[RMDB]
RNA sequence: GGGAACGACUCGAGUAGAGUCGAAAACGUCUACCCUGGGAAGUGAUCAUGGAACUUUCCGUGUCUGUUAUCGCGGGGUUGGUCAUCGCACUGCUGGCGGCCAUCACCCCUGCUGCGGGCGAACGCCUCGCCCUCUGGUUUUCGAACCAGAGGGCGAAAAAGAAACAACAACAACAAC
Reactivity to 2A3 in 0.01 (KOAc 150mM, MgCl2 10mM, bicine 150mM(pH8.5), 24C), signal-to-noise 3, nucleotides 027 to 126: c030g070u020c020u040a130c000c000c010u030g000g040g020a010a100g030u030g080a100u080c120a120u220g130g060a030a030c050u040u030u000c030c010g060u040g020u000c030u030g120u100u070a110u100c050g030c020g010g010g000g000u000u030g000g010u060c020a080u110c080g000c010a120c160u200g040c040u120g040g000c010g000g060c000c010a020u080c070a040c000c000c010c000u010g010c000u000g000c000g000g000g000c040g030a120a000c100g060c010c010
Reactivity to DMS in 0.01 (KOAc 150mM, MgCl2 10mM, bicine 150mM(pH8.5), 24C), signal-to-noise 2, nucleotides 027 to 126: c140g000u010c120u000a200c030c030c000u040g000g000g000a030a040g050u010g020a090u040c180a160u050g050g020a170a040c080u000u010u000c000c000g010u000g020u000c100u010g000u000u010a060u040c120g060c040g000g000g000g000u010u000g000g030u000c040a020u010c000g000c020a180c110u000g000c080u010g020g000c090g000g000c050c040a010u040c150a140c010c010c000c020u000g050c000u000g010c110g000g000g000c030g000a020a090c070g010c120c000
Conditions: 150 mM KOAc, 10 mM MgCl2 and 150 mM bicine (pH 8.5), 24 C.
Structure probing data (2A3 and DMS) for a 177-nucleotide construct.
Values are in units of 0.01, from 0 to 300, in steps of 10.
For DMS the reverse transcriptase was MarathonRT.